[RMDB]
RNA sequence: GGGAACGACUCGAGUAGAGUCGAAAACGAUUAGCAUUCGUGCUAAUCGAAUCAGGUAGUACCUAUCUCUAUUACCUGUAGUGGCCAACGUCCGCACAGAGAAUCGAGUCCUGUUCGCAGGACUCAAUACGGGAGCAAAAUUCGUUUUGCUCCCGUAAAAAGAAACAACAACAACAAC
Reactivity to DMS in 0.01 (KOAc 150mM, MgCl2 10mM, bicine 150mM(pH8.5), 24C), signal-to-noise 1, nucleotides 027 to 126: c010g010a000u000u000a000g020c010a020u000u010c250g020u000g010c010u000a000a010u000c000g020a040a130u000c050a000g010g000u000a020g040u000a100c180c150u000a120u000c160u000c040u010a010u000u000a020c030c010u000g000u000a110g000u000g010g040c050c050a070a070c250g020u000c020c060g080c040a050c230a120g010a080g000a140a080u010c200g000a000g010u000c010c000u000g000u000u000c170g000c020a000g020g010a000c000u000c000a000a050
Reactivity to 2A3 in 0.01 (KOAc 150mM, MgCl2 10mM, bicine 150mM(pH8.5), 24C), signal-to-noise 1, nucleotides 027 to 126: c000g000a010u010u010a020g000c020a030u060u050c200g090u060g000c010u020a000a000u000c000g010a010a090u060c030a010g000g040u010a010g030u040a080c010c010u070a070u130c120u000c030u030a030u010u120a040c010c000u010g040u050a110g000u000g030g060c010c080a080a050c010g060u000c020c020g050c080a000c010a050g060a010g050a120a090u160c110g000a010g000u000c000c000u020g060u040u050c280g000c070a020g000g000a000c010u000c010a030a010